[RMDB]
RNA sequence: GGGAACGACUCGAGUAGAGUCGAAAAUAUAGUAUUCGAUGGUGGCGCUGUCUACACACCAGGUGGUCAAUUGGAAAUUGGGAGCGUAGAGGUAGGCACUGUAACCUUCAGCGCUGCUAAUCCAAGAUCAUUCACCACGAUUCGUCGUGGUGAAUGAAAAAGAAACAACAACAACAAC
Reactivity to DMS in 0.01 (KOAc 150mM, MgCl2 10mM, bicine 150mM(pH8.5), 24C), signal-to-noise 3, nucleotides 027 to 126: u000a100u010a100g030u000a060u000u010c110g000a100u000g010g010u000g020g010c070g030c030u000g000u000c050u010a030c050a050c060a120c040c020a040g000g040u000g000g000u000c060a100a110u010u010g010g000a050a060a120u000u000g000g010g000a070g020c040g010u000a120g000a050g000g040u000a090g030g000c070a080c160u000g010u010a100a050c030c010u000u000c030a180g010c020g000c010u000g000c000u000a040a060u000c030c060a030a080g000a100
Reactivity to 2A3 in 0.01 (KOAc 150mM, MgCl2 10mM, bicine 150mM(pH8.5), 24C), signal-to-noise 1, nucleotides 027 to 126: u190a000u090a060g120u030a120u020u140c080g010a020u040g050g040u020g020g000c040g000c040u030g000u060c030u030a030c070a000c020a000c020c000a040g000g080u030g060g050u160c070a130a220u140u100g080g020a060a160a150u020u030g010g030g010a060g050c030g010u010a010g010a000g070g000u040a030g050g000c030a030c070u100g080u160a030a060c010c000u000u020c020a010g000c010g000c000u050g010c010u050a060a030u000c020c000a000a040g030a110
Structure probing data (DMS and 2A3) for a 177-nucleotide construct. DMS adducts were read by reverse transcription with MarathonRT. For 2A3, 1,164 sequencing reads were counted. It was measured as part of the RMDB library OK2TST. The RNA was probed in 150 mM KOAc, 10 mM MgCl2 and 150 mM bicine (pH 8.5) at 24 C.